[RMDB]
RNA sequence: GGGAACGACUCGAGUAGAGUCGAAAAGAACCAUCCGAAAGCACACAGAAAUCCUUGAGUGUGUGUGAAAAGCAAGGAUGAAAAUAAAACCUAUUAAGCGGUAUAGGGACGCGAAAAAGGAUGGGAACCCAAUAGUAAUCUUCGGAUUACUAUUGGGAAAAGAAACAACAACAACAAC
Reactivity to 2A3 in 0.01 (KOAc 150mM, MgCl2 10mM, bicine 150mM(pH8.5), 24C), signal-to-noise 9, nucleotides 027 to 126: g080a040a020c000c010a000u000c010c000g050a110a040a000g010c010a000c000a000c000a020g120a070a130a060u080c020c030u110u110g060a140g090u050g030u010g000u010g000u030g050a110a110a010a020g080c060a060a020g080g030a080u130g090a030a070a010a000u250a020a070a010a010c010c000u020a050u080u100a120a020g120c060g090g010u070a040u050a070g020g020g020a020c030g030c010g110a080a030a020a020a000g020g000a010u010g010g010g000a020a020
Reactivity to DMS in 0.01 (KOAc 150mM, MgCl2 10mM, bicine 150mM(pH8.5), 24C), signal-to-noise 6, nucleotides 027 to 126: g030a140a190c010c000a000u000c000c010g010a070a120a240g000c010a050c070a050c040a070g010a080a120a070u010c010c020u000u020g010a100g010u000g020u020g020u010g000u020g000a030a070a120a130g000c050a090a060g020g010a090u010g000a050a070a060a100u040a040a060a070a120c010c000u000a050u000u020a080a100g030c130g020g020u000a040u000a030g000g000g000a050c110g000c040g000a030a050a130a080a120g000g000a000u000g000g000g010a080a100